[RMDB]
RNA sequence: GGGAACGACUCGAGUAGAGUCGAAAAGGGGUCUAGGCCUCGUUGCGUAAGCUUUUGACGCUCUGAAGCCUCCACGGAGCGAUAAGCUUACGAACUACAACGAGACUAGACGGAGGCACCCAAAACCUACAGUCUUAGUUCGCUAAGACUGUAGGAAGCAUUAAGGUUAGUUCGCUAACCUUAAUGCAAAAGAAACAACAACAACAAC
Reactivity to DMS in 0.01 (KOAc 150mM, MgCl2 10mM, bicine 150mM(pH8.5), 24C), signal-to-noise 1, nucleotides 027 to 156: g030g000g010g000u000c010u010a080g020g010c060c000u010c010g030u010u000g020c020g040u000a030a050g000c010u000u030u000u000g040a180c120g030c010u000c000u000g000a110a120g000c000c000u000c000c010a300c010g040g000a040g030c010g010a090u000a030a050g020c000u000u000a040c010g000a050a190c000u010a140c000a030a000c000g000a010g010a030c020u000a090g010a080c040g000g010a030g010g040c020a140c010c020c010a080a100a150a190c000c000u000a020c000a010g020u010c000u000u000a000g000u000u000c300g030c000u000a010a000g010a070c000u000g000u010a020g000g000a020a060
Reactivity to 2A3 in 0.01 (KOAc 150mM, MgCl2 10mM, bicine 150mM(pH8.5), 24C), signal-to-noise 4, nucleotides 027 to 156: g050g000g020g000u010c010u010a010g030g030c030c000u000c000g000u000u010g020c010g000u010a000a010g000c040u090u150u260u240g130a080c060g010c010u000c000u010g050a120a030g000c000c000u000c000c000a020c010g000g000a010g010c010g040a060u080a230a060g000c010u000u000a000c000g000a020a020c090u290a070c040a000a000c000g010a000g010a000c000u000a000g000a000c010g000g000a000g010g010c000a040c000c010c000a030a070a050a090c000c000u000a000c000a000g000u010c000u000u020a030g010u040u070c210g010c200u000a000a000g000a000c000u000g000u000a000g000g000a000a000

Source information: Structure probing data (DMS and 2A3) for a 207-nucleotide construct. The DMS profile rests on 3,240 reads. Source: RMDB library RNAMAK, as collected in RNAgym. For 2A3, 9,322 sequencing reads were counted. DMS adducts were read by reverse transcription with MarathonRT. The RNA was probed in 150 mM KOAc, 10 mM MgCl2 and 150 mM bicine (pH 8.5) at 24 C.